[RMDB]
RNA sequence: GGGAACGACUCGAGUAGAGUCGAAAAAGGAUCAUUGCGCAGCAACCGGUUUAGGAAUGGCGUCAUCCACGGUAGUGCGUAGCCCGGUGAGAUGGCGGCGAACCACAUGAGCCAGUCCAGCCGCAGAACUAAAUGGCGGUUUCGACCGCCAUUUAGUAAAAGAAACAACAACAACAAC
Reactivity to 2A3 in 0.01 (KOAc 150mM, MgCl2 10mM, bicine 150mM(pH8.5), 24C), signal-to-noise 1, nucleotides 027 to 126: a040g070g000a050u060c030a040u060u130g000c030g020c060a090g030c020a020a020c030c020g020g000u060u050u050a060g020g090a130a060u110g010g030c000g020u010c010a030u010c020c010a000c030g000g040u090a070g050u080g070c080g040u110a020g000c000c000c000g050g060u050g000a300g000a030u040g020g000c010g000g020c050g030a040a020c020c000a030c050a140u150g020a020g000c010c000a000g000u050c000c000a000g000c020c010g000c040a030g060a050
Reactivity to DMS in 0.01 (KOAc 150mM, MgCl2 10mM, bicine 150mM(pH8.5), 24C), signal-to-noise 2, nucleotides 027 to 126: a060g020g020a080u010c070a130u010u010g000c050g020c050a040g010c080a110a060c100c020g020g010u000u000u020a100g010g000a080a050u010g000g000c010g000u010c020a050u000c010c020a050c060g000g010u010a100g030u000g030c100g000u000a140g000c070c010c000g020g000u020g020a150g000a040u000g000g000c010g000g010c010g000a050a130c030c030a080c120a100u000g010a060g030c030c010a010g000u000c060c100a100g000c040c030g010c080a090g020a060

An RNA of 177 nucleotides, treated with 2A3 and DMS and read out base by base. Reactivities are rounded to 0.1 and cut off at 0 and 3. 2A3 adducts were read by reverse transcription with SuperScript II with manganese. The RNA was probed in 150 mM KOAc, 10 mM MgCl2 and 150 mM bicine (pH 8.5) at 24 C.